[RMDB]
RNA sequence: GGGAACGACUCGAGUAGAGUCGAAAACGCUGGGCAACACGAAUCUAAUCGACAGACAUGCUGAAGCGCGCACGGCAACAGCUGUCAUUAGACUAUGUUGCCUGUGCUGAAGCGCGCACGGCAACCGAAAGGUGCGAAUUACUGUUUCGACAGUAAAGCUCAAACUUAUUUUCGAAUAAGUUUGAGCAAAAGAAACAACAACAACAAC
Reactivity to 2A3 in 0.01 (KOAc 150mM, MgCl2 10mM, bicine 150mM(pH8.5), 24C), signal-to-noise 6, nucleotides 027 to 156: c020g000c010u030g000g000g000c010a010a000c000a010c030g070a190a300u000c010u010a010a020u060c140g010a010c010a020g070a080c080a160u070g000c010u030g040a210a090g000c010g000c000g010c000a010c010g020g000c000a070a050c060a280g070c020u010g000u000c000a000u000u020a000g010a010c070u010a010u030g000u000u000g000c000c000u010g000u010g000c010u030g020a110a030g000c000g010c000g000c000a020c020g000g000c000a010a030c010c000g050a090a030a030g010g000u030g010c010g030a030a070u100u040a050c000u000g020u040u130u060c070g090a020c030a020g040u120a030a070a040
Reactivity to DMS in 0.01 (KOAc 150mM, MgCl2 10mM, bicine 150mM(pH8.5), 24C), signal-to-noise 2, nucleotides 027 to 156: c030g010c020u000g000g000g020c000a030a000c010a030c020g030a030a020u000c030u000a040a080u000c080g010a050c000a030g020a160c060a200u000g000c000u020g020a080a060g000c000g040c020g030c000a300c040g040g050c000a050a090c150a140g000c020u020g020u000c000a150u000u000a040g030a020c060u010a050u000g010u010u010g010c020c010u050g020u000g010c020u020g000a090a050g000c000g010c020g000c010a160c030g030g000c000a030a210c040c000g000a090a080a140g000g000u000g000c010g000a150a210u000u000a020c020u010g050u000u000u000c190g020a060c040a070g000u000a050a100a200
This 207-nucleotide RNA was probed chemically with 2A3 and DMS.
Conditions: 150 mM KOAc, 10 mM MgCl2 and 150 mM bicine (pH 8.5), 24 C.